[RMDB]
RNA sequence: GGGAACGACUCGAGUAGAGUCGAAAAAAGAUAUGGAUUAUCACAACGUAGUCAUGGCGUUUGACGUAAACUCGGAAACGAGUUUACCGAGCCAUGGGAUCGAAGUUGUGAGUAAUCCUAAGUCAAAUCAAUAGAGAAACUUCGGUUUCUCUAUUGAAAAAGAAACAACAACAACAAC
Reactivity to 2A3 in 0.01 (KOAc 150mM, MgCl2 10mM, bicine 150mM(pH8.5), 24C), signal-to-noise 2, nucleotides 027 to 126: a010a000g020a010u070a040u060g010g010a000u000u000a010u020c010a000c000a010a000c050g170u140a040g100u070c010a000u010g000g000c060g110u230u250u300g040a020c020g000u000a010a000a000c000u000c010g000g050a000a040a030c010g000a000g000u000u000u000a000c020c010g020a010g000c010c020a000u010g020g040g020a100u270c050g180a230a060g000u010u010g000u000g010a000g010u020a000a000u010c000c020u000a020a000g010u010c020a010a000a300
Reactivity to DMS in 0.01 (KOAc 150mM, MgCl2 10mM, bicine 150mM(pH8.5), 24C), signal-to-noise 5, nucleotides 027 to 126: a090a130g000a030u000a130u000g000g000a020u000u000a030u000c000a010c010a000a010c000g010u010a200g010u010c000a010u000g000g000c010g030u000u010u010g010a270c300g010u000a000a000a010c000u000c000g010g000a030a040a040c000g000a020g010u000u000u000a010c000c010g020a140g020c000c000a000u000g000g010g000a100u010c190g010a160a230g010u000u000g020u000g000a050g020u010a010a010u000c000c000u000a010a120g000u000c010a100a120a150